[RMDB]
RNA sequence: GGGAACGACUCGAGUAGAGUCGAAAACGUCAACCUGGGUUCUCCUGAUGAAGGCGGCAGGUGGAGACGGAUCCGGGUCCGGGACCCAUCUCGAGUUGGAGUCAAAGCUUUGUGCUUGUCUGGCGCUGCGUAUAAUUGCUUUCGAGCAAUUAUACGCAAAAGAAACAACAACAACAAC
Reactivity to DMS in 0.01 (KOAc 150mM, MgCl2 10mM, bicine 150mM(pH8.5), 24C), signal-to-noise 2, nucleotides 027 to 126: c010g010u000c060a140a010c010c000u000g000g020g020u030u000c020u040c010c010u020g000a130u010g010a170a030g010g040c090g000g000c010a020g020g000u000g000g000a080g010a050c080g020g010a050u000c030c050g030g010g020u000c040c050g000g000g000a150c020c010c000a190u030c040u000c020g000a100g000u000u000g010g010a100g000u000c010a100a060a050g010c010u010u000u020g010u010g020c050u000u000g020u030c040u010g020g000c040g020c110u000
Reactivity to 2A3 in 0.01 (KOAc 150mM, MgCl2 10mM, bicine 150mM(pH8.5), 24C), signal-to-noise 2, nucleotides 027 to 126: c030g000u000c020a010a030c020c020u020g140g010g000u060u020c070u100c020c010u050g040a100u110g070a140a010g020g000c030g020g040c030a000g010g000u030g000g090a110g030a030c010g000g000a020u020c020c010g030g020g020u000c050c040g080g040g050a050c020c000c000a080u070c050u070c030g010a000g010u010u030g060g040a050g040u060c000a070a020a010g040c010u130u100u300g060u080g010c030u020u020g030u010c030u030g020g020c070g010c010u040